The record gives the reactivity of an RNA of 177 nucleotides to DMS. The data come from the RNA Mapping Database (RMDB), library TTRDES. For DMS the reverse transcriptase was MarathonRT. Conditions: 150 mM KOAc, 10 mM MgCl2 and 150 mM bicine (pH 8.5), 24 C.

[RMDB]
RNA sequence: GGGAACGACUCGAGUAGAGUCGAAAAGAUAUGGAAGAAUCAUGCUACCCACCGAUGUACUCGGAAACGAGUACCAUCGAGGCAUGAGUUCUUCCUAAGUCAAAAGAAACGUCUUCGGACGUUUCAACAUGUCCCAGAACUUCGGUUCUGGGACAUGAAAAGAAACAACAACAACAAC
Reactivity to DMS in 0.01 (KOAc 150mM, MgCl2 10mM, bicine 150mM(pH8.5), 24C), signal-to-noise 1, nucleotides 027 to 126: g000a150u000a300u010g000g000a000a030g000a030a080u000c010a010u000g000c000u000a030c040c030c050a300c160c010g030a050u000g060u040a000c000u000c000g000g000a040a090a230c000g010a020g030u000a000c220c120a000u000c000g000a050g000g040c000a000u040g000a090g010u000u000c000u000u040c000c000u040a020a060g000u020c080a210a050a130a060g010a000a030a000c000g010u000c010u010u000c140g000g020a040c000g000u000u000u020c020a040a240